[RMDB]
RNA sequence: GGGAACGACUCGAGUAGAGUCGAAAAAGCCUGGUCGAUACGUCGACCAGGCAAUGCCGCCACAACGGCUUCCUGGCGUGGCGGAUCUCAUCCAAUGGAGCAACGCUCCGGAUACGUCCUGAGCGAAAAAAGCUCUGCUUCUUCGGAAGCAGAGCAAGUAGAGACUCUUGUUCGCAAGAGUCUCUACAAAAGAAACAACAACAACAAC
Reactivity to 2A3 in 0.01 (KOAc 150mM, MgCl2 10mM, bicine 150mM(pH8.5), 24C), signal-to-noise 1, nucleotides 027 to 156: a000g300c000c000u000g010g000u000c000g030a010u000a190c170g050u010c000g000a030c030c000a000g040g010c000a010a000u030g000c000c000g000c000c000a000c000a010a010c090g040g020c000u130u170c010c010u050g020g000c010g000u000g010g000c020g000g000a030u050c020u010c030a060u030c020c050a080a230u230g000g000a000g000c050a090a020c010g000c010u000c030c060g010g000a030u030a070c150g060u000c000c000u000g000a020g010c000g180a130a030a000a000a000a000g000c000u030c000u000g000c010u000u040c050u030u010c170g060g000a000a000g000c010a000g000a000g040c000a000a000
The record gives the reactivity of an RNA of 207 nucleotides to 2A3. Reactivities are given for positions 27 through 156.